[RMDB]
RNA sequence: GGGAACGACUCGAGUAGAGUCGAAAAAUACGGGAGCUUGCCCUUUCCUUUCUGCAUAAAUGCCCUCAUUAGAGGCACUUAUAAAGUCAGGAAGAAAGCACCCACCUGCCAUGGUGCGGGGUUCAAAGUGAUAUUUCUUGUUCGCAAGAAAUAUCACAAAAGAAACAACAACAACAAC
Reactivity to DMS in 0.01 (KOAc 150mM, MgCl2 10mM, bicine 150mM(pH8.5), 24C), signal-to-noise 3, nucleotides 027 to 126: a070u020a060c150g020g000g020a080g020c000u000u000g010c130c060c020u010u010u000c000c000u000u000u000c000u000g020c300a010u000a000a010a010u000g000c150c020c030u000c080a150u010u000a070g010a020g000g010c000a000c030u000u000a000u000a080a300a030g020u010c030a010g000g000a000a010g000a060a030a000g010c010a090c000c010c000a100c000c000u000g020c020c010a190u000g020g010u020g040c010g000g000g000g000u000u010c090a070a110a130
Reactivity to 2A3 in 0.01 (KOAc 150mM, MgCl2 10mM, bicine 150mM(pH8.5), 24C), signal-to-noise 2, nucleotides 027 to 126: a010u230a060c120g010g000g000a020g010c010u040u010g060c000c030c000u040u040u020c020c000u000u010u000c020u020g000c000a000u000a010a030a000u020g030c050c000c010u040c040a130u060u240a060g010a060g020g010c000a010c010u020u010a010u010a040a000a010g000u010c010a000g000g000a000a020g020a000a020a000g010c000a030c010c000c000a030c000c000u010g000c000c030a300u300g130g000u230g050c020g010g010g010g040u080u140c070a110a110a010
Chemical mapping of a 177-nucleotide RNA with DMS and 2A3. 2A3 adducts were read by reverse transcription with SuperScript II with manganese. The data come from the RNA Mapping Database (RMDB), library RFMREP.